This 207-nucleotide RNA was probed chemically with 2A3 and DMS. 2A3 adducts were read by reverse transcription with SuperScript II with manganese. The data come from the RNA Mapping Database (RMDB), library OK3TST. The reactions ran in a buffer of 150 mM KOAc, 10 mM MgCl2 and 150 mM bicine (pH 8.5), at 24 C.
RNA sequence: GGGAACGACUCGAGUAGAGUCGAAAAUUAGGAGGCUGAGGAGGGUAGAUAACCUGAGGUCAGGAGUUCCAGACCAGCCUGACCAAUACGGUGAAACCCCCUCUCUACUAAAAAUAUGAAAAUUAGCCGGGCAUGGUGGCACAGGCACCUGUAAUGACAUACGCUACGUAUUCGUACGUAGCGUAUGAAAAGAAACAACAACAACAAC
Reactivity to 2A3 in 0.01 (KOAc 150mM, MgCl2 10mM, bicine 150mM(pH8.5), 24C), signal-to-noise 1, nucleotides 027 to 156: u030u030a030g040g040a020g050g060c300u060g050a010g040g040a170g000g040g000u010a010g050a120u100a070a070c000c000u000g010a000g000g000u010c000a010g000g000a030g050u060u120c180c080a070g060a040c030c000a000g080c010c000u000g000a000c000c000a000a000u160a060c080g000g000u000g030a070a000a000c010c010c000c000c000u000c000u000c010u000a020c010u000a010a080a040a000a040u120a060u100g070a030a030a030a130u080u050a030g060c030c030g030g000g060c030a020u070g000g060u030g020g010c030a000c030a140g060g000c050a020c080c000u070g050u090a080a060u110g040a010
Reactivity to DMS in 0.01 (KOAc 150mM, MgCl2 10mM, bicine 150mM(pH8.5), 24C), signal-to-noise 1, nucleotides 027 to 156: u000u000a070g030g020a050g030g000c090u010g020a000g030g000a130g010g060g000u000a080g000a210u000a150a050c010c030u000g010a030g000g010u000c000a000g000g000a100g010u000u000c070c060a290g000a140c070c020a130g000c010c010u000g010a040c010c010a020a120u000a230c090g000g030u000g030a020a060a090c010c010c000c010c000u000c020u000c010u010a040c010u000a010a040a100a040a070u020a100u010g000a080a120a100a170u000u000a080g020c040c040g010g000g010c060a060u000g000g070u010g010g050c020a060c040a080g030g000c000a060c010c040u000g000u010a050a070u000g010a280